[RMDB]
RNA sequence: GGGAACGACUCGAGUAGAGUCGAAAACUUCUUCACGACUUAGCUUUGCAAAAAGAAUUAUAGAUGAUUAUACAUAUAAGAAUCUACCAGUGAAAAGGUUAUAUGAACAAUUGCUUAGAGAUGUGAACUAUCCUCUCAUGUUCGCAUGAGAGGAUAGAAAAGAAACAACAACAACAAC
Reactivity to 2A3 in 0.01 (KOAc 150mM, MgCl2 10mM, bicine 150mM(pH8.5), 24C), signal-to-noise 1, nucleotides 027 to 126: c000u070u000c010u040u020c020a000c060g130a050c090u080u070a050g010c000u010u000u010g010c020a130a000a060a130a060g050a130a150u260u080a030u090a230g010a010u060g050a020u030u130a130u000a210c020a000u300a000u000a300a020g000a040a000u000c010u010a040c000c070a120g040u120g260a000a110a040a040g130g000u130u090a100u000a060u090g010a060a010c050a060a130u130u130g000c000u000u040a010g000a020g000a150u230g000u000g000a000a000
Reactivity to DMS in 0.01 (KOAc 150mM, MgCl2 10mM, bicine 150mM(pH8.5), 24C), signal-to-noise 2, nucleotides 027 to 126: c060u000u010c080u000u000c030a010c010g020a130c060u000u000a100g000c010u020u000u000g000c160a040a110a040a030a010g000a280a160u000u020a180u030a030g000a060u000g000a220u000u000a070u010a300c080a080u030a030u010a010a030g000a260a030u000c030u000a080c120c090a120g030u020g010a070a070a080a040g030g000u000u000a160u000a130u010g010a120a050c040a030a020u000u010g010c010u000u000a080g030a030g030a080u030g030u000g010a090a150